RNA sequence: GGGAACGACUCGAGUAGAGUCGAAAAACGUAGGGGCAGUGACUUACUACCAGCACGAAAUACUACCCUCCGAAUCCGUCUCAGACACUCCUGUUGUGAGAGGGUGGUUGGGCAAGAACAGGUUAGAUCCAGUAACGCACUUCGGUGCGUUACUGGAAAAAGAAACAACAACAACAAC
Reactivity to DMS in 0.01 (KOAc 150mM, MgCl2 10mM, bicine 150mM(pH8.5), 24C), signal-to-noise 1, nucleotides 027 to 126: a180c090g020u000a030g010g000g030g040c070a060g020u000g030a170c110u000u000a080c030u000a060c050c110a080g050c060a080c070g020a050a070a040u000a120c040u010a070c010c000c010u000c050c000g020a140a090u000c010c070g000u000c070u010c020a180g000a080c090a070c140u010c060c030u010g020u010u000g030u010g000a130g000a050g020g000g010u010g010g000u010u000g010g000g010c100a080a150g000a050a030c100a060g000g010u000u000a130g000a090

The record gives the reactivity of an RNA of 177 nucleotides to DMS.
DMS adducts were read by reverse transcription with MarathonRT.
It was measured as part of the RMDB library OK2TRN.
Reactivities are given for positions 27 through 126.
The RNA was probed in 150 mM KOAc, 10 mM MgCl2 and 150 mM bicine (pH 8.5) at 24 C.
For DMS, 834 sequencing reads were counted.